The data come from the RNA Mapping Database (RMDB), library OK2TRN. Structure probing data (DMS and 2A3) for a 177-nucleotide construct.
[RMDB]
RNA sequence: GGGAACGACUCGAGUAGAGUCGAAAAUGGGUCCAGAAUUGGUGGGGUAGUGCUGAUCUUCUGUUUAAGGCAGUUUGGUGUUACUGUUGGUUUCAGUGCAAUCGCCCGGUGUUUACCUUAUAACAGGAGUAGUAUGAAACUUCGGUUUCAUACUACUAAAAGAAACAACAACAACAAC
Reactivity to DMS in 0.01 (KOAc 150mM, MgCl2 10mM, bicine 150mM(pH8.5), 24C), signal-to-noise 6, nucleotides 027 to 126: u000g000g010g020u000c030c050a080g010a110a110u000u000g010g020u000g010g000g010g020u000a060g010u010g010c060u000g010a090u010c040u000u000c040u000g000u010u010u010a070a100g010g010c040a040g000u010u000u010g010g020u000g000u000u000a050c040u000g000u000u000g010g000u010u010u000c030a050g010u000g010c110a070a090u010c100g010c020c020c030g010g010u000g000u010u010u000a090c030c010u010u000a060u010a080a060c110a050g010g000
Reactivity to 2A3 in 0.01 (KOAc 150mM, MgCl2 10mM, bicine 150mM(pH8.5), 24C), signal-to-noise 2, nucleotides 027 to 126: u050g020g000g000u000c030c010a060g070a020a220u160u100g000g040u070g010g050g020g060u080a040g060u030g060c030u010g050a080u000c020u100u010c030u060g160u070u090u130a040a010g050g000c010a020g010u010u060u170g100g030u010g040u090u040a010c030u000g050u100u060g010g090u030u060u040c040a030g030u030g050c010a020a100u050c050g110c020c000c020g000g000u040g010u000u110u040a080c010c020u060u140a200u060a140a050c050a010g090g000